[RMDB]
RNA sequence: GGGAACGACUCGAGUAGAGUCGAAAACGGUCCGCUGUAACCCGAAAUCCGCCUCAUGCGGGGGCCGAAGCCGAGGGGGCGGCCCGGUCCCCCGGAGUACCGGCCCCCCGGACCCGACCGAUGACCCGAUCUCUGCAUAAUUCGUUAUGCAGAGAUCAAAAGAAACAACAACAACAAC
Reactivity to 2A3 in 0.01 (KOAc 150mM, MgCl2 10mM, bicine 150mM(pH8.5), 24C), signal-to-noise 4, nucleotides 027 to 126: c020g020g030u020c020c030g010c060u070g050u080a070a080c010c000c010g030a100a070a030u010c010c020g030c020c010u050c020a050u130g020c070g000g000g010g000g000c010c020g010a030a020g020c010c000g030a140g010g000g000g010g000c010g010g020c000c010c000g040g010u020c000c010c000c010c000g010g000a020g040u050a080c010c040g000g010c000c000c010c000c000c000g010g000a010c000c010c010g020a030c010c010g040a060u060g070a040c010c010c010
Reactivity to DMS in 0.01 (KOAc 150mM, MgCl2 10mM, bicine 150mM(pH8.5), 24C), signal-to-noise 3, nucleotides 027 to 126: c130g000g010u010c010c030g000c080u020g000u000a080a100c080c030c000g020a050a150a100u010c020c010g030c040c010u010c050a050u010g060c120g030g000g000g030g010c000c000g000a200a240g000c010c010g020a300g010g000g020g000g010c040g000g000c030c010c010g000g000u000c000c000c010c010c010g000g000a020g010u020a110c300c020g010g000c030c000c000c000c000c040g000g000a090c010c010c030g020a090c050c030g030a120u030g000a090c050c030c060